[RMDB]
RNA sequence: GGGAACGACUCGAGUAGAGUCGAAAAUCAGUAAUAAACUAGGCAUAAGCAUAAAGAAGCUCAAUCGUAUUCUGACACUUGAGCAGUUACCAGAUGAGAGAUUAUUGAAAGAGAUGAUAGAACUAUGCAAGUAAAGGAAUAUGCUUUAUAUAAAGGAGCUUACAAUGCUAUUCGUAGCAUUGUAAGCAAAAGAAACAACAACAACAAC
Reactivity to 2A3 in 0.01 (KOAc 150mM, MgCl2 10mM, bicine 150mM(pH8.5), 24C), signal-to-noise 3, nucleotides 027 to 156: u060c010a010g080u080a050a160u080a120a040a060c070u050a030g030g000c000a050u030a070a040g000c020a030u040a050a120a000g070a040a010g040c020u040c040a020a070u080c030g010u060a060u080u100c030u100g030a020c020a030c120u020u060g020a020g070c020a010g020u030u040a030c060c030a020g040a090u070g010a030g020a020g010a080u060u050a050u060u260g050a030a060a040g060a010g000a020u090g010a020u080a100g040a030a000c030u040a050u140g000c010a010a060g030u090a080a040a020g000g030a030a010u030a020u070g000c000u040u130u020a140u020a020u120a090a070a050g060g000a010
Reactivity to DMS in 0.01 (KOAc 150mM, MgCl2 10mM, bicine 150mM(pH8.5), 24C), signal-to-noise 1, nucleotides 027 to 156: u000c020a110g000u000a070a030u000a060a070a110c090u000a110g010g040c010a090u000a070a090g010c030a040u020a010a140a130g010a070a090g010c060u020c010a030a160u000c060g040u000a110u000u000c010u000g000a240c070a070c030u010u000g000a040g010c040a130g040u000u000a070c020c000a170g000a050u000g000a120g000a060g000a040u030u000a110u010u000g050a060a030a190g020a040g000a030u010g020a100u020a030g010a060a090c100u020a080u000g000c020a070a080g020u000a080a100a160g000g020a040a100u000a040u000g000c040u010u000u000a040u000a180u000a050a090a120g000g000a250

An RNA of 207 nucleotides, treated with 2A3 and DMS and read out base by base. Values cover nucleotides 27 to 156.